Overview
Structure probing data (DMS and 2A3) for a 207-nucleotide construct. For 2A3 the reverse transcriptase was SuperScript II with manganese. The reactions ran in a buffer of 150 mM KOAc, 10 mM MgCl2 and 150 mM bicine (pH 8.5), at 24 C. For DMS, 5,605 sequencing reads were counted. DMS adducts were read by reverse transcription with MarathonRT.
[RMDB]
RNA sequence: GGGAACGACUCGAGUAGAGUCGAAAAGAAUGACCUUUGAGCUCUUAAGGACAUCAAGAUUCAACAAUAUGUGAUAAAGUUGGUCAGAGGUCCUGCUUGACGCUAUAAGCUGUGGUAUUCCAUCAUUUAGAAUCAAACAAUGUAAGAUUCCAACACAAAACGCAGGAAUAUUCGUAUUCCUGCGUUUAAAAGAAACAACAACAACAAC
Reactivity to DMS in 0.01 (KOAc 150mM, MgCl2 10mM, bicine 150mM(pH8.5), 24C), signal-to-noise 3, nucleotides 027 to 156: g010a130a110u010g010a210c010c010u000u000u000g020a080g020c020u000c020u000u010a120a120g010g010a070c030a120u010c040a130a120g010a080u000u000c040a060a060c040a070a230u000a100u000g010u020g010a180u000a060a090a230g020u010u000g000g040u000c020a170g010a090g030g040u000c000c010u010g000c110u010u000g010a050c050g020c040u000a100u000a080a140g030c010u000g020u000g010g010u000a140u000u010c020c020a120u010c060a140u000u000u000a010g000a050a030u000c020a070a100a160c040a080a060u020g010u000a120a200g010a100u000u000c010c030a030a120c130a070c090a070
Reactivity to 2A3 in 0.01 (KOAc 150mM, MgCl2 10mM, bicine 150mM(pH8.5), 24C), signal-to-noise 5, nucleotides 027 to 156: g130a020a070u120g060a030c010c000u040u060u140g060a020g030c000u050c050u140u100a050a030g030g000a000c030a020u080c070a080a130g020a080u280u180c030a010a000c030a060a100u130a100u240g210u080g100a120u120a120a140a030g010u010u010g040g000u010c020a010g020a020g090g000u000c000c010u000g000c020u030u050g020a030c040g000c020u030a040u050a250a030g030c080u070g040u030g090g000u070a080u050u080c020c020a060u120c040a050u130u090u080a050g030a030a040u030c060a050a020a160c020a100a110u200g100u240a120a010g020a030u070u010c040c020a070a050c070a020c050a140